Chemical mapping of a 207-nucleotide RNA with DMS and 2A3. Reactivities are given for positions 27 through 156. For 2A3, 614 sequencing reads were counted.
RNA sequence: GGGAACGACUCGAGUAGAGUCGAAAAUGAUUUUUAGAGCCGGGUUUAAGCCUCCGUUCCGGUCCUCACACAGCUGCCAUGUCAAUAAGGACUGUUUCAAGCAGAGGCAUUCCUUCUGGGAGGGCACUGCAGCUCCUUAAGACUUCAUGUGAAACAAAAAUUUAUACCGAUUCGUCGGUAUAAAUUUAAAAGAAACAACAACAACAAC
Reactivity to DMS in 0.01 (KOAc 150mM, MgCl2 10mM, bicine 150mM(pH8.5), 24C), signal-to-noise 1, nucleotides 027 to 156: u010g010a100u010u010u000u000u000a150g030a100g000c010c010g000g030g000u000u000u000a060a190g010c020c000u000c010c020g010u000u020c140c010g010g000u000c040c030u010c080a200c030a080c050a090g060c090u000g000c040c100a120u000g000u010c030a030a130u000a050a100g060g000a050c050u000g000u000u000u020c130a060a220g080c120a090g010a080g010g020c020a090u000u010c030c020u000u000c170u010g010g000g020a050g010g010g000c050a120c030u000g030c020a130g020c030u000c010c000u000u000a050a170g020a050c010u000u020c090a100u010g000u000g000a120a070a100c030a000a100
Reactivity to 2A3 in 0.01 (KOAc 150mM, MgCl2 10mM, bicine 150mM(pH8.5), 24C), signal-to-noise 1, nucleotides 027 to 156: u050g000a020u060u160u000u150u290a090g030a060g040c060c080g000g000g020u190u100u100a080a000g020c020c020u030c030c040g020u100u000c010c000g030g040u040c000c000u070c000a030c000a010c030a060g100c020u020g000c020c040a080u060g020u060c010a100a250u060a070a040g000g010a010c000u020g050u090u060u200c150a180a090g060c040a020g060a080g030g000c050a040u030u040c000c000u010u170c030u090g040g070g000a020g020g040g050c000a010c010u010g010c000a040g010c010u020c010c000u100u090a110a070g030a060c000u050u070c130a040u100g020u050g090a070a040a060c070a010a090

Source information:
For DMS the reverse transcriptase was MarathonRT.